Notes:
The data come from the RNA Mapping Database (RMDB), library OK3TST. Structure probing data (2A3) for a 207-nucleotide construct.
[RMDB]
RNA sequence: GGGAACGACUCGAGUAGAGUCGAAAAAGAAUAAGGAGACAGUUGGACGUUGGCAAUUUUGCUGUCAAUUCAAAGUUUAGCAAAGGCAAACAGAAGAAAAUAAUUUGUCAUGGCUGCGAAGCGCAAACUCAAUUUUGACGACGAUGAUCAAUCAAAACGCCAUAUGUAACUUCGGUUACAUAUGGCGAAAAGAAACAACAACAACAAC
Reactivity to 2A3 in 0.01 (KOAc 150mM, MgCl2 10mM, bicine 150mM(pH8.5), 24C), signal-to-noise 2, nucleotides 027 to 156: a000g120a020a080u230a050a050g010g000a010g020a030c010a020g030u040u040g010g000a000c020g000u020u020g030g000c050a060a060u070u040u050u060g050c090u080g010u060c030a010a070u040u050c010a010a000a170g030u060u040u040a030g000c010a060a060a060g050g030c030a000a000a070c090a040g060a090a000g050a010a240a000a030u150a050a050u020u050u000g010u010c050a050u040g050g000c020u030g010c040g030a100a080g030c040g000c070a020a060a060c010u040c060a060a060u060u000u080u130g020a070c030g000a000c030g020a030u060g010a070u070c010a050a000u030c040a080a080a020a010

The RNA was probed in 150 mM KOAc, 10 mM MgCl2 and 150 mM bicine (pH 8.5) at 24 C. 2A3 adducts were read by reverse transcription with SuperScript II with manganese.